[RMDB]
RNA sequence: GGGAACGACUCGAGUAGAGUCGAAAAGAGCUCUUCCGCUUUCUUUCUUCCAUUGACCCACUGCUCGAGGACGUCCUCCCUGUCUCCUCGGUUCUUCUUCGAUCCGGACCGGCUCAUCUCGGCAAGAGUCUAUACAUGGGUUCGCCCAUGUAUAGACAAAAGAAACAACAACAACAAC
Reactivity to DMS in 0.01 (KOAc 150mM, MgCl2 10mM, bicine 150mM(pH8.5), 24C), signal-to-noise 1, nucleotides 027 to 126: g020a070g000c040u000c120u000u000c090c090g010c050u010u000u000c030u000u000u000c050u000u010c010c070a160u000u000g000a110c010c010c060a130c050u010g000c010u000c030g000a010g020g000a160c100g010u000c070c060u000c000c020c030u000g030u020c060u000c000c030u010c050g010g010u010u000c030u000u000c070u020u000c080g000a050u000c030c030g020g010a180c040c050g000g020c030u000c040a070u000c060u000c050g010g000c100a120a100g020a140
Reactivity to 2A3 in 0.01 (KOAc 150mM, MgCl2 10mM, bicine 150mM(pH8.5), 24C), signal-to-noise 2, nucleotides 027 to 126: g020a010g010c030u050c020u270u030c120c050g030c070u030u100u000c050u040u080u030c010u160u020c010c040a210u070u240g000a050c020c020c020a060c040u020g000c000u020c020g000a010g000g100a190c010g000u020c000c010u020c010c000c000u030g060u030c040u030c010c000u000c000g060g030u040u000c010u050u030c000u020u060c060g050a060u010c030c010g040g020a060c020c010g040g000c010u000c020a070u030c010u010c030g010g050c030a050a000g040a020